[RMDB]
Structure probing data (2A3) for a 177-nucleotide construct. The reactions ran in a buffer of 150 mM KOAc, 10 mM MgCl2 and 150 mM bicine (pH 8.5), at 24 C. 2A3 adducts were read by reverse transcription with SuperScript II with manganese. For 2A3, 523 sequencing reads were counted.
RNA sequence: GGGAACGACUCGAGUAGAGUCGAAAAGCUCGGCGCGGCGUUCAAACCCGAAUCCGAUGACGUGCGCGAUUCGCCCGCCCUCAAUGUGGCGGGCCAGCUGCAGCUCAACGGCGCCACGGUCCACGUGGUACGGCCUUUGCUUCGGCAAAGGCCGUACAAAAGAAACAACAACAACAAC
Reactivity to 2A3 in 0.01 (KOAc 150mM, MgCl2 10mM, bicine 150mM(pH8.5), 24C), signal-to-noise 1, nucleotides 027 to 126: g040c010u020c130g030g000c040g000c000g030g070c000g010u030u030c090a020a100a180c000c000c000g020a050a010u050c010c100g080a030u120g030a090c010g080u070g020c010g000c060g080a110u140u060c060g000c010c000c000g000c000c000c030u090c080a170a250u160g090u140g050g010c000g040g000g000c000c000a000g000c000u070g000c000a010g000c000u010c030a060a000c100g040g000c020g060c000c000a000c000g000g070u070c090c130a100c090g020u020g090